Conditions: 150 mM KOAc, 10 mM MgCl2 and 150 mM bicine (pH 8.5), 24 C. An RNA of 177 nucleotides, treated with DMS and 2A3 and read out base by base. The DMS profile rests on 814 reads. DMS (dimethyl sulfate) methylates the pairing face of unpaired adenines and cytosines. It was measured as part of the RMDB library TTRDEL. The 2A3 profile rests on 2,146 reads. DMS adducts were read by reverse transcription with MarathonRT.
RNA sequence: GGGAACGACUCGAGUAGAGUCGAAAAGAUAUGGACUGACAAGGGAGCUAUGUCGGAAACGAUUUAGCAUCGAUCUUGCAGUCCUAAGUCAAACCUAGACUAGAGAGUUCGCUCUCUAGUCUAGGAAGUGACUUCAAGACUUCGGUCUUGAAGUCACAAAAGAAACAACAACAACAAC
Reactivity to DMS in 0.01 (KOAc 150mM, MgCl2 10mM, bicine 150mM(pH8.5), 24C), signal-to-noise 1, nucleotides 027 to 126: g000a050u010a300u030g000g000a000c010u010g000a170c020a040a000g000g020g010a080g000c000u000a000u000g030u000c030g010g010a040a110a170c020g000a010u000u000u000a000g000c000a250u010c170g000a060u010c000u000u000g020c000a010g000u010c000c010u010a000a030g000u000c000a120a140a130c000c000u000a000g000a000c000u000a000g010a010g000a020g030u040u000c280g010c000u010c000u000c000u000a000g000u000c000u000a010g000g000a010a030
Reactivity to 2A3 in 0.01 (KOAc 150mM, MgCl2 10mM, bicine 150mM(pH8.5), 24C), signal-to-noise 1, nucleotides 027 to 126: g080a000u040a060u100g000g020a010c000u000g040a250c020a000a000g050g050g000a020g000c000u010a020u040g020u000c030g000g020a070a010a000c000g010a030u010u070u000a000g000c060a230u300c030g080a110u020c010u000u000g000c000a010g000u020c000c000u010a080a010g010u020c020a000a010a110c000c010u010a000g000a000c000u000a010g000a000g000a030g000u080u190c300g070c210u000c000u000c000u020a000g000u000c000u010a000g000g010a000a020